[RMDB]
RNA sequence: GGGAACGACUCGAGUAGAGUCGAAAACGUAAUCCUGCCAGCUUAAAUUAAACGCAAACAACAAAAAUUACGCUCCAGCUUACGCAAAAGUAGCGUAGGUUUAUCUCUGUUUUGGAGCCGAUCUUUUUGCCAUAUCUACUAACAAAAAAGGUCGUUAGUACCGUACUGUGUUCGCACAGUACGGUACAAAAGAAACAACAACAACAAC
Reactivity to 2A3 in 0.01 (KOAc 150mM, MgCl2 10mM, bicine 150mM(pH8.5), 24C), signal-to-noise 3, nucleotides 027 to 156: c020g020u000a050a030u070c030c010u020g070c040c010a070g010c050u140u170a060a190a180u140u190a150a170a110c150g020c060a100a110a110c080a090a030c110a050a140a030a090a080u180u100a030c020g000c000u000c000c000a000g010c030u000u000a000c000g010c000a050a120a010a240g120u230a100g040c010g000u000a010g000g040u000u090u080a100u050c080u000c040u130g100u140u150u040u080g000g000a000g000c000c000g000a000u000c010u030u000u000u000u050g020c020c040a020u020a060u130c030u070a100c020u070a120a080c030a130a010a000a000a000a000g000g000u000c000g030u040u030a010

Source information: The record gives the reactivity of an RNA of 207 nucleotides to 2A3. The reactions ran in a buffer of 150 mM KOAc, 10 mM MgCl2 and 150 mM bicine (pH 8.5), at 24 C. High 2A3 reactivity points to a flexible backbone, as in loops and unpaired stretches.